[RMDB]
RNA sequence: GGGAACGACUCGAGUAGAGUCGAAAAAAGCGCUAAAACGUGGGAUUCUGUGUCGUUUUAUGUUGUUCAUUGACAAACCUAUCUAGUAGGUCUAUAGAUUGAUAUAUUAAGUAGUAGUUUCCCUCCCCAGGAAUCUUAAGUUCGCUUAAGAUUCCUGAAAAGAAACAACAACAACAAC
Reactivity to DMS in 0.01 (KOAc 150mM, MgCl2 10mM, bicine 150mM(pH8.5), 24C), signal-to-noise 2, nucleotides 027 to 126: a070a100g000c030g040c060u000a080a060a060a140c020g020u000g020g010g000a070u000u000c030u000g000u000g000u010c030g020u010u010u000u010a050u020g020u000u000g000u000u000c060a110u020u000g010a070c150a050a060a050c080c010u000a020u000c090u000a120g010u000a030g000g000u000c020u010a300u010a060g010a050u000u000g000a030u010a040u000a050u000u000a020a060g010u020a080g020u000a060g010u000u000u000c000c000c010u000c000c020c030
Chemical mapping of a 177-nucleotide RNA with DMS. It was measured as part of the RMDB library RFMREP. The RNA was probed in 150 mM KOAc, 10 mM MgCl2 and 150 mM bicine (pH 8.5) at 24 C. DMS adducts were read by reverse transcription with MarathonRT.